[RMDB]
RNA sequence: GGGAACGACUCGAGUAGAGUCGAAAAGAAGAGAAUAUCGGUGUAAGUGCAGCCCGUCUUACACCGUAAGGCACAGCGGAAACGCUGAUGUAAAAUACAGGGCUGAGAGACGGAAGUAGACCGUCAAAUACCGGUGACUAUUCGUAGUCACCGGUAUAAAAGAAACAACAACAACAAC
Reactivity to DMS in 0.01 (KOAc 150mM, MgCl2 10mM, bicine 150mM(pH8.5), 24C), signal-to-noise 2, nucleotides 027 to 126: g010a170a090g020a180g030a100a090u010a060u030c030g000g000u010g020u000a010a000g010u000g020c030a020g000c010c000c000g000u020c020u000u000a000c000a010c000c030g030u000a000a020g000g000c040a030c000a000g000c030g050g000a110a050a170c000g000c000u000g000a040u000g020u000a080a100a070a010u080a010c100a100g040g000g000c020u000g000a190g000a070g000a000c000g000g000a050a210g100u050a070g000a090c000c000g000u000c000a080a020
Reactivity to 2A3 in 0.01 (KOAc 150mM, MgCl2 10mM, bicine 150mM(pH8.5), 24C), signal-to-noise 4, nucleotides 027 to 126: g140a020a040g100a010g060a110a060u120a050u190c010g000g010u000g000u000a020a020g000u020g130c030a000g010c020c020c000g000u000c000u010u000a000c000a000c000c000g000u030a010a050g190g000c000a000c000a010g000c000g010g000a120a040a010c000g000c000u000g030a040u030g010u070a010a040a050a040u220a060c080a070g000g000g010c010u010g010a050g000a000g000a030c000g020g010a210a070g020u110a020g090a090c000c000g000u000c000a000a040